[RMDB]
RNA sequence: GGGAACGACUCGAGUAGAGUCGAAAACGGACUUCGUCGCCCCGCUGGGGAACAAAAUAAAAAACCCUUGCUGGGGCAAGUGUACCGAUCAUGGCCGGCGAGAAGGAUAGCGCCCAAUGGGCCGCAGUACGCCCAAUCUGCGAACCGCUCGGCAUCGCUCGUAACACGUAUUCGUACGUGUUACGAGAAAAGAAACAACAACAACAAC
Reactivity to 2A3 in 0.01 (KOAc 150mM, MgCl2 10mM, bicine 150mM(pH8.5), 24C), signal-to-noise 1, nucleotides 027 to 156: c010g000g000a000c010u160u050c080g130u120c010g050c000c000c000c000g000c000u040g000g000g000g000a060a060c030a050a230a170a120u300a180a150a030a060a060a130c030c010c010u030u020g080c120u270g000g000g000g000c000a010a010g040u030g000u000a220c000c000g000a000u180c130a140u040g130g000c010c040g000g000c010g040a090g050a050a020g280g050a030u180a140g080c050g000c120c000c000a120a300u230g000g000g000c050c080g030c000a030g010u010a040c140g170c000c000c000a000a090u030c000u000g000c000g000a040a030c010c040g000c060u300c000g010g010c030a000u280c090g020